RNA sequence: GGGAACGACUCGAGUAGAGUCGAAAAACUCAGGCUCAGUACGCUGAGCCUGAGAAUCGCGCAUCUUGUUGUCCAAGUGUAGUUUUUGGCGAAACCAUUUGAUCAUGCAACAAGAUGCGCUUCCAAAAGUGCACGCUAAAUUCGUUUAGCGUGCACUAAAAGAAACAACAACAACAAC
Reactivity to 2A3 in 0.01 (KOAc 150mM, MgCl2 10mM, bicine 150mM(pH8.5), 24C), signal-to-noise 3, nucleotides 027 to 126: a000c000u010c000a000g010g040c000u000c000a000g000u020a060c220g050c140u010g000a000g000c010c000u000g000a000g010a000a010u060c050g000c000g000c000a000u000c000u000u000g010u010u010g040u060c030c000a040a030g030u030g020u060a180g030u120u020u010u020u210g230g060c270g030a000a000a000c000c020a030u020u000u000g090a140u110c130a110u300g020c000a000a000c000a000a010g010a000u000g010c010g000c000u000u000c000c010a030a020a030
Reactivity to DMS in 0.01 (KOAc 150mM, MgCl2 10mM, bicine 150mM(pH8.5), 24C), signal-to-noise 1, nucleotides 027 to 126: a080c000u010c010a010g010g000c000u000c000a030g010u000a070c300g030c000u010g000a010g030c000c000u030g010a010g010a000a020u060c240g010c000g020c000a000u000c000u000u000g020u000u000g010u000c300c000a030a030g010u000g000u000a130g010u000u000u000u030u010g040g020c260g010a030a010a020c000c000a000u000u040u000g000a130u010c200a120u010g040c000a000a030c010a020a050g010a010u000g020c040g000c040u000u020c000c000a060a040a040